[RMDB]
RNA sequence: GGGAACGACUCGAGUAGAGUCGAAAAGAUAUGGAGCUACAAGGGAGUCGGUCGGAAACGACCCGACAUCGAUCUUGCGGCUCCUAAGUCAAACCUAAGAGUAAUGCUUCGGCAUUACUCUUAGGAACCUUUGUUCCAAGUUCGCUUGGAACAAAGGAAAAGAAACAACAACAACAAC
Reactivity to DMS in 0.01 (KOAc 150mM, MgCl2 10mM, bicine 150mM(pH8.5), 24C), signal-to-noise 2, nucleotides 027 to 126: g000a010u000a300u010g000g020a030g000c000u000a080c000a000a020g000g010g000a010g020u020c000g020g000u010c000g020g000a060a080a250c030g000a030c040c080c050g040a000c010a130u000c140g000a110u020c000u000u000g000c050g000g010c010u000c000c020u000a000a030g010u000c050a070a120a250c000c000u000a000a000g010a020g000u000a000a010u000g000c000u020u020c270g020g020c000a000u000u000a020c000u000c000u000u000a000g000g000a020a050
Reactivity to 2A3 in 0.01 (KOAc 150mM, MgCl2 10mM, bicine 150mM(pH8.5), 24C), signal-to-noise 2, nucleotides 027 to 126: g040a020u130a040u150g010g000a000g000c020u040a020c000a030a000g050g020g000a050g020u010c010g000g010u000c000g010g040a060a090a040c030g050a030c130c210c040g020a000c000a140u190c020g070a070u040c010u000u010g010c060g020g000c020u000c010c000u020a030a020g020u010c020a060a050a130c000c000u000a000a000g010a000g020u010a020a010u010g000c030u040u150c300g090g000c010a000u000u000a000c000u000c000u010u000a000g010g000a020a000